[RMDB]
RNA sequence: GGGAACGACUCGAGUAGAGUCGAAAAGCCACAAUUCUUGCCGCGUAGUCGAGCAACUCGUCGUAAUUGAGGUAGUCACACGCGAGCAUCAGGUUGAUCAUGUCGUCGUGAUGUUCCAGGUGUCCAGACGUGUUGAAGAAUACAAUUCGCUUCAUCAGAAACCGUCCUCUUUCGAGAGGACGGUUUCAAAAGAAACAACAACAACAAC
Reactivity to 2A3 in 0.01 (KOAc 150mM, MgCl2 10mM, bicine 150mM(pH8.5), 24C), signal-to-noise 1, nucleotides 027 to 156: g070c050c000a040c030a090a100u050u070c000u090u130g100c100c070g010c240g110u190a070g030u000c040g050a010g100c010a010a010c000u000c000g060u050c010g150u170a090a230u080u080g000a070g050g070u210a090g070u110c000a030c000a000c090g010c050g000a000g030c000a000u030c000a050g000g130u060u070g110a050u000c020a020u290g170u170c030g010u010c070g030u040g010a000u000g010u000u000c060c100a090g040g040u000g000u000c030c050a010g000a020c000g050u050g000u020u030g000a010a000g030a060a010u300a050c090a050a000u220u180c000g060c000u000u080c060a120u110c080a000

Chemical mapping of a 207-nucleotide RNA with 2A3. The reactions ran in a buffer of 150 mM KOAc, 10 mM MgCl2 and 150 mM bicine (pH 8.5), at 24 C.